[RMDB]
The record gives the reactivity of an RNA of 207 nucleotides to DMS and 2A3. It was measured as part of the RMDB library M2RFPK. Conditions: 150 mM KOAc, 10 mM MgCl2 and 150 mM bicine (pH 8.5), 24 C.
RNA sequence: GGGAACGACUCGAGUAGAGUCGAAAAAGGGAAGAAAAUAAUUUAGAAAGGAGAUUCCGCCCCAGCUUGCGGUGCGGCCGAAAGGCUGUAAGGCAUCCCGGUGAGGGGAGGCAAGGCGAAAGCCAAAAACGGUACACCAUCUUCGGAUGGUGUACAAGACCUUACUUAACUUCGGUUAAGUAAGGUCAAAAGAAACAACAACAACAAC
Reactivity to DMS in 0.01 (KOAc 150mM, MgCl2 10mM, bicine 150mM(pH8.5), 24C), signal-to-noise 1, nucleotides 027 to 156: a060g000g030g050a130a110g000a160a060a160a190u000a090a110u000u000u000a120g010a030a040a180g000g020a150g020a250u000u000c020c030g020c010c010c000c000a220g030c060u000u010g040c040g010g070u000g030c030g020g060c020c000g050a070a070a260g010g000c010u000g030u000a050a110g000g040c000a040u010c010c000c030g030g010u000g000a080g000g040g010g040a020g010g020c050a060a050g000g000c000g020a040a050a250g000c020c060a040a060a140a080a040c050g010g000u000a000c000a030c000c010a010u000c000u010u000c300g020g000a000u000g040g060u000g010u000a000c000a020a110
Reactivity to 2A3 in 0.01 (KOAc 150mM, MgCl2 10mM, bicine 150mM(pH8.5), 24C), signal-to-noise 2, nucleotides 027 to 156: a000g070g020g000a060a030g060a050a160a040a040u160a110a090u160u180u190a080g050a080a160a070g050g020a070g010a030u070u000c010c010g000c000c000c010c020a020g010c050u080u170g000c070g040g010u010g010c000g010g020c020c010g040a050a000a010g010g000c040u050g070u150a060a030g110g000c000a020u020c000c000c030g000g030u040g010a110g000g000g000g000a000g000g010c030a020a060g010g010c020g060a060a010a000g000c000c000a080a030a000a000a000c080g060g000u000a000c000a000c000c000a000u020c020u020u040c040g050g010a000u000g000g000u000g010u010a000c000a000a000